Notes:
Source: RMDB library M2PK90, as collected in RNAgym. The record gives the reactivity of an RNA of 177 nucleotides to DMS and 2A3. For 2A3, 1,352 sequencing reads were counted. For 2A3 the reverse transcriptase was SuperScript II with manganese. The RNA was probed in 150 mM KOAc, 10 mM MgCl2 and 150 mM bicine (pH 8.5) at 24 C.

[RMDB]
RNA sequence: GGGAACGACUCGAGUAGAGUCGAAAAUACAAUAGCGUAGGGAACCAAGCUAAGAGGUUGGAAGUCCAACCGUAGAGGGCUUGGUUCGCAGCUGCUCUAGAAGAGGUCCCACUCCCUACGCCGCAAAGUAUAUCCCUGUCUUCGGACAGGGAUAUACAAAAGAAACAACAACAACAAC
Reactivity to DMS in 0.01 (KOAc 150mM, MgCl2 10mM, bicine 150mM(pH8.5), 24C), signal-to-noise 2, nucleotides 027 to 126: u010a070c070a040a080u010a090g010c010g000u000a000g000g000g010a040a040c000c010a030a040g020c000u020a060a160g000a200g020g040u000u010g010g010a300a160g000u010c010c010a000a040c000c000g000u000a040g040a160g020g000g010c000u020u010g000g000u000u010c020g040c070a040g020c100u010g020c040u000c010u010a090g000a120a120g020a060g000g010u010c010c020c010a230c080u000c050c010c000u000a020c040g020c030c130g030c200a040a030a060
Reactivity to 2A3 in 0.01 (KOAc 150mM, MgCl2 10mM, bicine 150mM(pH8.5), 24C), signal-to-noise 1, nucleotides 027 to 126: u170a010c060a010a140u050a110g000c000g030u010a000g000g000g030a000a000c000c000a000a030g000c000u050a070a030g070a080g100g000u000u000g000g060a280a100g130u140c010c000a010a020c000c000g000u010a040g020a110g050g000g040c000u000u010g000g000u000u010c030g000c020a010g010c030u070g020c040u000c020u070a130g070a230a010g040a060g070g000u060c030c020c000a020c040u000c000c020c000u000a010c000g000c060c000g110c060a090a080a010